[RMDB]
RNA sequence: GGGAACGACUCGAGUAGAGUCGAAAAGGGCAUAUCUUCGGAUAUGCCCAAACGUCGAAAAGGAAAAGUCGCAUGCGUCGAUCGAACAACGUCGCAUCCGACAAACUCGGAGGUUCGCCUCCGAGAAGGUUGUUAUGAAGUUCGCUUCAUAACAACCAAAAGAAACAACAACAACAAC
Reactivity to DMS in 0.01 (KOAc 150mM, MgCl2 10mM, bicine 150mM(pH8.5), 24C), signal-to-noise 2, nucleotides 027 to 126: g030g040g030c010a040u000a000u000c000u000u020c190g060g010a020u010a000u010g000c000c000c000a010a010a070c120g010u000c050g000a040a030a090a080g030g020a110a070a100a180g010u000c000g000c290a000u000g010c010g030u010c000g000a090u000c100g000a080a190c230a110a050c010g000u000c010g020c000a000u000c200c010g000a000c000a030a040a110c000u000c000g000g000a010g000g010u000u000c200g010c000c000u000c000c000g000a000g010a020a080
Reactivity to 2A3 in 0.01 (KOAc 150mM, MgCl2 10mM, bicine 150mM(pH8.5), 24C), signal-to-noise 2, nucleotides 027 to 126: g000g000g000c020a010u010a000u000c020u040u060c180g020g000a000u000a000u000g010c010c010c000a010a000a000c010g090u070c050g070a030a030a030a040g070g050a060a090a040a010g000u010c000g010c010a010u010g000c010g010u000c000g050a150u080c110g030a070a050c040a060a060c080g010u000c000g000c020a000u030c110c000g000a020c010a010a010a020c000u000c010g010g000a000g020g020u060u060c210g070c020c010u000c000c000g000a000g000a010a000